RNA sequence: GGGAACGACUCGAGUAGAGUCGAAAAGAAAUGCUAUUGUCUUACUGCUACAGCAGGGCUGGGGAUUGCAGUAUCCGCUGUUGCUGCUGCUGCCAGUCCUGCCCCUGCUGCUACCUAGUCCAGCCAAGAUAGAACCGGUUUUCGAACCGGUUCUAUCAAAAGAAACAACAACAACAAC
Reactivity to DMS in 0.01 (KOAc 150mM, MgCl2 10mM, bicine 150mM(pH8.5), 24C), signal-to-noise 3, nucleotides 027 to 126: g010a070a060a030u020g000c090u010a050u010u000g010u000c020u010u010a090c060u000g020c200u000a050c070a030g000c000a020g000g010g010c000u000g000g020g010g000a020u000u030g000c010a010g000u000a030u010c030c140g040c040u010g040u000u000g030c020u000g020c050u000g000c040u010g000c070c060a010g000u000c000c010u000g010c250c010c010c020u010g010c010u010g020c070u020a060c090c030u000a060g000u010c030c050a090g000c060c130a090a150
Reactivity to 2A3 in 0.01 (KOAc 150mM, MgCl2 10mM, bicine 150mM(pH8.5), 24C), signal-to-noise 7, nucleotides 027 to 126: g030a000a060a010u140g010c060u100a080u140u110g060u030c020u030u080a080c030u040g030c000u040a030c030a010g000c010a000g010g010g000c020u070g040g000g000g060a080u030u060g010c000a000g000u020a040u030c020c050g040c090u110g140u290u220g040c020u000g000c000u000g000c010u020g110c040c030a010g010u010c010c000u010g000c000c000c000c010u000g010c000u010g020c020u020a030c000c010u010a020g040u000c010c020a010g020c020c020a100a050